[RMDB]
Chemical mapping of a 177-nucleotide RNA with DMS and 2A3. For DMS, 30,817 sequencing reads were counted. High 2A3 reactivity points to a flexible backbone, as in loops and unpaired stretches.

RNA sequence: GGGAACGACUCGAGUAGAGUCGAAAACGCCACACUGAGAAGUGCGUCAUCAUUGACGCACCGGGCCUGCUUCGCGAGGUGGGCAUCUCCGAUGCAAUCGUCAACAACUUUUUCCUCGCCGGUGGCGAGGUUGAACACCAUUCGUGGUGUUCAACCUAAAAGAAACAACAACAACAAC
Reactivity to DMS in 0.01 (KOAc 150mM, MgCl2 10mM, bicine 150mM(pH8.5), 24C), signal-to-noise 9, nucleotides 027 to 126: c060g010c010c010a030c030a150c130u010g000a090g010a130a090g010u000g010c010g010u000c010a050u010c290a210u010u000g010a010c000g010c000a000c010c070g000g010g010c050c050u000g000c050u000u000c090g010c140g010a040g010g020u000g010g010g020c060a100u000c020u010c080c070g010a050u000g010c060a090a060u000c090g010u000c060a080a100c180a080a090c070u000u000u000u000u000c010c010u000c030g010c040c110g010g010u000g010g010c010g010
Reactivity to 2A3 in 0.01 (KOAc 150mM, MgCl2 10mM, bicine 150mM(pH8.5), 24C), signal-to-noise 9, nucleotides 027 to 126: c020g010c010c000a020c010a010c050u120g060a020g030a230a020g020u000g000c000g020u010c000a070u040c020a080u040u190g000a000c010g000c000a000c000c010g000g030g010c010c010u040g010c020u080u080c040g020c070g050a020g000g030u100g010g130g000c010a020u020c080u000c030c090g020a010u040g010c030a040a120u100c050g080u090c050a040a040c010a010a060c100u070u080u030u090u040c010c020u020c030g040c040c050g130g020u030g000g000c000g000